[RMDB]
RNA sequence: GGGAACGACUCGAGUAGAGUCGAAAAUAGACAAAGUUAAAACACCUCAUAUUGUACGUCAGCGUUUAACUGAGUACACUAUGAUGGAUCUUGUAUAUGCCCUGAGGCACUUUGAUCAAAAUAGCGAGAUAUCGAUCAUGUUCGCAUGAUCGAUAUCAAAAGAAACAACAACAACAAC
Reactivity to DMS in 0.01 (KOAc 150mM, MgCl2 10mM, bicine 150mM(pH8.5), 24C), signal-to-noise 2, nucleotides 027 to 126: u020a050g000a020c010a010a030a030g000u000u000a070a040a160a060c150a130c010c040u000c000a000u000a000u000u000g000u000a010c000g000u000c000a000g020c060g000u000u030u000a100a060c000u020g010a180g000u000a010c010a010c040u000a020u000g000a030u000g020g000a110u000c120u000u010g010u000a060u000a060u000g010c030c010c110u000g000a100g000g010c050a090c020u000u010u000g000a070u030c030a050a100a070a070u000a060g020c160g000a130
Reactivity to 2A3 in 0.01 (KOAc 150mM, MgCl2 10mM, bicine 150mM(pH8.5), 24C), signal-to-noise 3, nucleotides 027 to 126: u120a010g020a000c020a000a010a010g010u070u110a130a190a050a000c020a040c000c000u010c010a000u000a000u000u010g000u020a000c030g260u010c040a010g040c040g070u100u190u200a050a000c020u000g000a000g000u000a000c010a000c000u000a000u000g010a020u120g010g000a040u040c010u060u070g000u000a060u020a020u150g020c010c020c030u080g080a300g000g060c020a000c020u070u050u030g040a120u120c020a020a020a060a100u120a050g110c050g040a080